[RMDB]
RNA sequence: GGGAACGACUCGAGUAGAGUCGAAAACAAUAGCCCAGCAUUCCCUGUCGAAAUGCAGAUUAAAUAUGUCAUUAUCACAGGCCAAUGGGAGGUGUUUCACGAAAACCGGGAAAAGCGAAUUUCUGCCAAAUGAAUGAAUGUUCGCAUUCAUUCAUUUAAAAGAAACAACAACAACAAC
Reactivity to DMS in 0.01 (KOAc 150mM, MgCl2 10mM, bicine 150mM(pH8.5), 24C), signal-to-noise 9, nucleotides 027 to 126: c110a080a090u020a140g000c010c000c010a160g010c110a080u020u010c200c010c000u000g010u000c170g010a030a040a020u000g000c030a030g000a120u020u040a080a140a130u020a060u000g000u030c020a020u010u010a120u000c020a030c030a030g010g010c170c100a050a060u010g000g000g010a060g010g010u000g000u000u000u010c060a070c100g010a080a030a090a080c060c020g000g010g000a040a060a060a100g010c080g010a070a150u000u010u000c010u000g010c300c150
Reactivity to 2A3 in 0.01 (KOAc 150mM, MgCl2 10mM, bicine 150mM(pH8.5), 24C), signal-to-noise 9, nucleotides 027 to 126: c040a020a130u080a150g020c000c000c010a010g030c010a030u070u100c010c000c000u010g040u050c100g020a020a010a010u030g000c020a010g040a110u150u270a100a130a070u280a080u070g110u150c010a020u010u050a170u210c020a010c010a020g020g000c020c030a070a040u050g010g020g010a050g000g020u040g050u050u100u060c080a080c070g070a040a040a050a070c040c020g010g020g020a030a100a020a000g060c050g040a050a090u030u040u010c010u040g040c030c030